[RMDB]
RNA sequence: GGGAACGACUCGAGUAGAGUCGAAAAGUCUCAACUACUCAGGAGGCUGAGGCUGGAGGAUCGCUUGAACCUGGGAGGUCAAGGCUCCAGUGAACCAUAAUUGUGCCACUGCACUGCAGCCUGGGCGAUCUACGCGCUAGUUCGCUAGCGCGUAGAUAAAAGAAACAACAACAACAAC
Reactivity to 2A3 in 0.01 (KOAc 150mM, MgCl2 10mM, bicine 150mM(pH8.5), 24C), signal-to-noise 2, nucleotides 027 to 126: g030u000c020u010c020a050a090c040u300a040c020u000c050a080g010g010a030g050g000c030u040g020a010g030g030c000u020g000g000a010g000g050a140u150c070g010c210u060u030g010a060a090c020c000u110g110g260g150a150g050g000u000c010a000a000g000g080c000u000c010c010a000g010u000g060a010a020c020c010a020u120a140a050u220u130g050u100g000c000c090a140c110u130g000c050a080c140u040g000c000a010g000c000c030u060g000g040g000c030g000
Reactivity to DMS in 0.01 (KOAc 150mM, MgCl2 10mM, bicine 150mM(pH8.5), 24C), signal-to-noise 2, nucleotides 027 to 126: g000u000c000u000c010a120a090c100u000a110c010u000c020a080g000g020a110g000g000c010u000g010a070g010g020c020u000g000g010a030g000g020a070u000c130g000c050u000u000g010a080a040c030c020u010g010g010g000a100g000g000u000c020a030a010g000g000c010u000c050c030a010g010u000g010a110a160c080c010a090u010a110a070u010u000g030u010g000c020c070a110c090u000g020c000a060c010u000g010c070a000g000c010c010u000g000g030g030c090g010